[RMDB]
RNA sequence: GGGAACGACUCGAGUAGAGUCGAAAAUCUUUUCCUUUUCUCGUCUUCCUCGGUCAGCCUCCUGAGUUCCUCUUCUUCCUCCCUGCUGAGGUUCUUCCCUCCCCCGGCGAGCUGCUUCUUCUUGUUCCGCGACGGUUCUUCGGAACCGUCAAAAGAAACAACAACAACAAC
Reactivity to 2A3 in 0.01 (KOAc 150mM, MgCl2 10mM, bicine 150mM(pH8.5), 24C), signal-to-noise 3, nucleotides 027 to 129: u060c050u050u040u020u030c000c020u020u020u040u020c050u030c010g080u020c030u080u050c030c020u030c000g030g000u060c020a010g010c000c000u070c000c010u030g020a000g070u040u040c030c030u000c030u010u060c020u030u020c010c010u000c020c010c010u010g000c020u050g020a020g040g010u080u000c000u040u040c000c000c000u020c000c000c000c000c000g000g000c020g020a030g020c020u030g020c000u020u010c010u030u020c010u030u060g030u020u020c000c000g050c010
Reactivity to DMS in 0.01 (KOAc 150mM, MgCl2 10mM, bicine 150mM(pH8.5), 24C), signal-to-noise 4, nucleotides 027 to 129: u010c040u000u000u000u000c090c040u000u040u030u020c060u020c070g040u050c030u030u020c050c030u010c040g010g070u020c110a090g040c070c050u040c040c030u050g020a180g020u030u020c030c030u010c080u000u000c030u020u010c070c020u010c020c000c040u010g000c080u040g000a210g040g020u040u030c090u000u040c000c000c000u020c040c020c020c010c030g070g000c000g040a040g000c060u020g010c000u030u030c030u000u000c090u000u000g030u010u000c040c000g010c180